Source information:
Chemical mapping of a 207-nucleotide RNA with DMS and 2A3. For 2A3, 17,014 sequencing reads were counted. The reactions ran in a buffer of 150 mM KOAc, 10 mM MgCl2 and 150 mM bicine (pH 8.5), at 24 C. For DMS, 34,647 sequencing reads were counted. Source: RMDB library OK3TST, as collected in RNAgym.
RNA sequence: GGGAACGACUCGAGUAGAGUCGAAAAGAAGCACGGCUUGUGUGUGAUCCUUUUGGAUUGCACUGUAUAUCCUACGCUGUGCGAACGUAGGGCCAUUGUGGCGAGAGCCACUUACAGUACAGCUUAUUAUGACGCAUCGCUGUACGAACGAUGCUGACAUAUAUCCCUAUUUCGAUAGGGAUAUAUGAAAAGAAACAACAACAACAAC
Reactivity to DMS in 0.01 (KOAc 150mM, MgCl2 10mM, bicine 150mM(pH8.5), 24C), signal-to-noise 7, nucleotides 027 to 156: g010a130a140g010c020a050c040g010g020c060u000u000g020u000g030u020g020u010g000a040u000c000c010u000u000u000u000g040g020a060u000u000g020c000a020c010u000g020u000a090u000a100u000c040c010u000a050c050g030c010u000g020u000g010c060g010a080a040c030g010u000a050g010g010g020c150c070a120u000u000g030u000g030g070c010g020a290g000a300g020c010c000a020c010u000u000a030c030a100g010u000a050c040a060g000c040u000u000a120u010u000a110u010g010a160c130g000c020a040u000c080g010c010u000g020u000a100c110g010a050a050c020g010a050u000g010c010u000g010a210
Reactivity to 2A3 in 0.01 (KOAc 150mM, MgCl2 10mM, bicine 150mM(pH8.5), 24C), signal-to-noise 9, nucleotides 027 to 156: g090a050a010g010c020a010c040g030g010c050u150u130g050u010g000u000g010u010g160a010u010c010c000u080u200u170u300g010g000a010u000u000g010c010a000c000u010g080u020a150u020a020u100c010c030u030a030c050g000c030u040g010u030g050c000g010a040a000c030g020u050a040g010g040g000c050c040a090u040u140g000u000g010g000c010g010a060g000a000g020c000c000a010c000u020u070a050c020a010g010u010a010c000a010g010c020u070u040a080u160u090a110u290g110a060c080g010c060a030u070c030g000c020u020g020u100a040c030g010a050a010c030g010a020u070g010c020u030g020a010